[RMDB]
RNA sequence: GGGAACGACUCGAGUAGAGUCGAAAAGCAAUGGGAAUUCAUGAACCAUGUCAGGUCCGGAAGGAAGCAGCAUUAAGUGAAACCUCUCAUGUGCCGCAGGGUUGCCUGGGCCGAGCUAACUGCUUAAGUAACGCUUAGGGUAGCGAAUCGACAGAAGCUCAUACCACUGGUUCGCCAGUGGUAUGAGAAAAGAAACAACAACAACAAC
Reactivity to 2A3 in 0.01 (KOAc 150mM, MgCl2 10mM, bicine 150mM(pH8.5), 24C), signal-to-noise 2, nucleotides 027 to 156: g020c000a000a060u020g010g000g010a010a090u070u010c010a040u110g000a060a080c110c020a040u040g040u100c000a000g040g010u010c010c030g040g040a060a000g040g000a030a000g020c010a000g000c000a020u020u030a070a050g020u010g100a070a060a080c010c040u010c010u030c040a060u110g060u080g140c010c040g060c090a040g030g060g100u090u110g030c030c020u040g000g020g000c000c020g020a000g000c020u040a050a080c000u110g030c010u130u050a060a020g020u030a150a000c020g000c000u020u030a060g030g000g040u000a000g010c010g050a060a100u060c020g040a000c030a050g090a040a010g030
Reactivity to DMS in 0.01 (KOAc 150mM, MgCl2 10mM, bicine 150mM(pH8.5), 24C), signal-to-noise 1, nucleotides 027 to 156: g030c060a040a070u030g000g030g020a050a300u000u000c000a060u000g030a060a170c020c070a100u000g010u000c040a300g030g010u000c000c000g040g020a150a140g000g000a010a100g020c020a130g020c010a040u000u010a060a260g000u000g000a060a040a020c070c080u000c010u020c000a000u020g030u000g100c010c000g000c050a110g000g030g010u010u000g000c010c060u000g000g000g010c010c050g000a090g000c070u000a040a060c030u000g000c000u000u030a030a050g020u010a060a170c130g000c020u000u000a090g000g040g000u000a070g020c000g020a070a090u000c020g000a040c020a130g000a040a140g010